Structure probing data (2A3 and DMS) for a 207-nucleotide construct. For DMS, 4,722 sequencing reads were counted. The reactions ran in a buffer of 150 mM KOAc, 10 mM MgCl2 and 150 mM bicine (pH 8.5), at 24 C. The 2A3 profile rests on 879 reads.
[RMDB]
RNA sequence: GGGAACGACUCGAGUAGAGUCGAAAAUAGCUUUAGGUGUGCGUUUUUGUGGCUUUUGUAGUGGCGCCUGUGCCGCAUCAGUGUGUUUACGUCUCGCCGCACGAGGUUUGAUGGUUUUGGCGGUUUCAACAGCGUUUACGGCAGCAUCUCCUGUGGCCUAUAGGAGGUGUUUCGACACCUCCUAUAGAAAAGAAACAACAACAACAAC
Reactivity to 2A3 in 0.01 (KOAc 150mM, MgCl2 10mM, bicine 150mM(pH8.5), 24C), signal-to-noise 2, nucleotides 027 to 156: u120a010g030c020u000u040u130a080g030g000u010g030u020g060c000g050u020u060u050u070u140g040u020g040g060c040u060u100u030u120g060u040a070g010u040g090g030c030g060c040c020u070g030u100g000c000c000g060c050a060u070c020a040g050u020g000u000g050u190u090u060a060c030g020u000c040u020c080g050c050c000g010c020a010c080g030a030g030g000u050u060u120g040a040u050g020g060u060u040u170u000g080g000c020g040g000u020u170u150c040a060a020c020a010g010c010g020u030u120u110a070c050g000g010c000a030g010c020a080u060c050u040c060c000u030g050u050g030g050c010
Reactivity to DMS in 0.01 (KOAc 150mM, MgCl2 10mM, bicine 150mM(pH8.5), 24C), signal-to-noise 1, nucleotides 027 to 156: u000a110g020c060u000u040u000a050g020g030u020g040u000g010c040g010u000u010u000u000u020g050u010g010g000c000u010u010u000u000g030u000a120g020u000g020g040c040g020c060c000u030g050u020g010c020c070g100c040a060u010c050a070g000u010g020u000g030u000u020u000a070c030g030u000c020u020c060g040c040c030g010c030a110c080g020a130g020g060u000u000u000g040a080u000g000g020u010u000u000u010g020g010c000g050g000u000u000u010c020a050a050c040a090g000c050g010u010u010u020a090c070g000g070c030a070g000c020a050u010c030u000c010c040u000g030u010g010g020c050